[RMDB]
RNA sequence: GGGAACGACUCGAGUAGAGUCGAAAAGUCAGUCAACUAGCACCAGGUCCAAAAGCUAGUGACUGACAAAGGGCCUGGAGCUCAGAAAAUAAAGUAUCCGAUAAGGAUACAAAAGAAAAGUGAGCAAAAUACGGUAUGACUUCGGUCAUACCGUAUUAAAAGAAACAACAACAACAAC
Reactivity to 2A3 in 0.01 (KOAc 150mM, MgCl2 10mM, bicine 150mM(pH8.5), 24C), signal-to-noise 4, nucleotides 027 to 126: g010u020c000a010g000u010c010a060a080c110u000a010g000c010a050c060c080a100g130g180u120c040c030a090a090a020a000g000c000u000a000g010u000g000a000c000u000g000a000c000a020a010a020g020g010g040c000c010u020g070g060a050g000c000u000c010a010g100a060a130a020a030u200a040a060a020g000u000a000u000c000c000g070a110u120a300a050g000g020a000u000a000c000a000a090a000a000g090a000a090a000a000g090u020g000a000g010c020a010a160
Reactivity to DMS in 0.01 (KOAc 150mM, MgCl2 10mM, bicine 150mM(pH8.5), 24C), signal-to-noise 4, nucleotides 027 to 126: g010u010c000a010g000u010c020a080a050c010u000a000g030c000a180c170c080a120g020g000u040c160c100a060a070a100a100g000c000u000a010g010u010g010a010c010u000g010a010c000a000a040a120g020g020g000c020c000u010g010g000a130g000c010u000c010a040g000a080a090a080a070u030a090a110a090g000u000a000u010c000c010g000a190u090a130a130g000g000a010u000a000c000a020a090a100a110g000a120a040a070a110g000u000g000a000g000c020a140a080
Structure probing data (2A3 and DMS) for a 177-nucleotide construct. The RNA was probed in 150 mM KOAc, 10 mM MgCl2 and 150 mM bicine (pH 8.5) at 24 C. The DMS profile rests on 6,712 reads. Source: RMDB library OK1LIB, as collected in RNAgym. The 2A3 profile rests on 4,544 reads.